[RMDB]
RNA sequence: GGGAACGACUCGAGUAGAGUCGAAAAUCUAAAGGCUUCGGUUUCAUCACUCCUGCUGAUGGUAGCAAAGACGUUUUCGUUCACUUCUCUGCCAUUCAGGGCGCUGGUUUCAAAACUCUGGCAGAAGCGUAAAUCGAACGUUCGCGUUCGAUUUACGAAAAGAAACAACAACAACAAC
Reactivity to 2A3 in 0.01 (KOAc 150mM, MgCl2 10mM, bicine 150mM(pH8.5), 24C), signal-to-noise 2, nucleotides 027 to 126: u080c050u140a120a050a000g080g000c040u050u030c000g010g060u020u040u050c050a100u060c020a030c040u020c000c010u000g020c020u040g030a030u040g000g070u040a000g050c030a090a070a010g030a020c030g010u020u000u100u130c080g010u120u100c050a020c040u040u050c050u000c000u020g020c030c000a050u120u050c030a030g000g010g000c010g000c010u020g000g030u080u030u050c040a010a030a000a030c030u070c010u020g030g000c020a000g080a080a030g000
Reactivity to DMS in 0.01 (KOAc 150mM, MgCl2 10mM, bicine 150mM(pH8.5), 24C), signal-to-noise 2, nucleotides 027 to 126: u040c060u000a000a010a080g000g020c010u020u020c030g020g010u010u000u000c080a000u010c070a120c170u000c030c000u010g000c220u010g000a070u000g000g020u070a030g000c300a050a010a090g000a030c060g000u080u010u020u000c070g020u010u010c080a140c090u010u000c060u000c020u000g000c010c000a010u050u020c080a080g040g000g020c100g000c060u000g010g000u020u000u030c020a000a000a120a110c060u000c050u020g000g040c110a090g010a050a010g010